[RMDB]
RNA sequence: GGGAACGACUCGAGUAGAGUCGAAAAAUCGGAGCAGUAGGAGGUGAUCUACUUUACCUUGAUCUUCUGAACAGACUACAAGCCCUUGAGUCUGGCAAAGUAAAGCAAUCGCAGCCAAAAGUAAUCAGAGGAUGUUACGGUUCGCCGUAACAUCCUCAAAAGAAACAACAACAACAAC
Reactivity to 2A3 in 0.01 (KOAc 150mM, MgCl2 10mM, bicine 150mM(pH8.5), 24C), signal-to-noise 2, nucleotides 027 to 126: a000u120c050g030g000a020g000c040a000g080u300a030g140g030a010g000g000u000g010a090u000c020u100a080c010u060u060u060a010c000c000u090u040g040a100u050c110u170u030c060u070g020a060a050c000a000g000a020c000u100a080c090a120a000g080c000c000c000u040u070g000a000g000u000c000u000g000g020c000a000a000a260g040u060a040a040a060g000c050a040a010u000c000g000c000a040g050c000c010a130a080a000a000g110u120a050a070u100c020a030